[RMDB]
Annotation:
The record gives the reactivity of an RNA of 177 nucleotides to DMS and 2A3. The reactions ran in a buffer of 150 mM KOAc, 10 mM MgCl2 and 150 mM bicine (pH 8.5), at 24 C. For DMS the reverse transcriptase was MarathonRT. It was measured as part of the RMDB library VIROID.
RNA sequence: GGGAACGACUCGAGUAGAGUCGAAAAGCGUACCAUCCUUUCUUACCUGAUGGCCGGCAUGGUCCCAGCCUCCUCGCUGGCGCCGGCUGGGCAACAUUUCGAGGGGACCGUCCCCUCGGUAAUGGCGGCGUCUAUAUAACUUCGGUUAUAUAGACGCAAAAGAAACAACAACAACAAC
Reactivity to DMS in 0.01 (KOAc 150mM, MgCl2 10mM, bicine 150mM(pH8.5), 24C), signal-to-noise 2, nucleotides 027 to 126: g000c080g030u010a040c010c030a090u010c050c080u010u000u000c040u000u020a160c090c050u010g000a070u000g000g000c030c010g040g040c020a140u000g010g000u040c240c000c030a030g010c020c070u010c110c050u000c170g010c090u000g000g020c230g000c010c030g000g010c000u010g000g000g000c050a110a080c020a050u000u000u000c000g010a010g000g000g050g000a250c240c300g010u000c000c000c000c010u000c000g010g000u000a010a000u000g010g000c230g020
Reactivity to 2A3 in 0.01 (KOAc 150mM, MgCl2 10mM, bicine 150mM(pH8.5), 24C), signal-to-noise 2, nucleotides 027 to 126: g060c010g040u090a110c000c020a030u080c010c040u090u120u080c030u070u110a060c020c020u080g030a110u150g110g020c020c000g030g000c050a120u150g070g000u070c010c000c020a000g000c010c040u100c010c010u060c090g040c030u030g020g040c040g000c000c000g010g040c000u010g030g010g000c030a070a020c000a090u010u040u030c000g010a000g040g030g020g000a040c040c050g300u300c030c000c000c010u000c000g000g010u040a000a010u000g030g040c070g070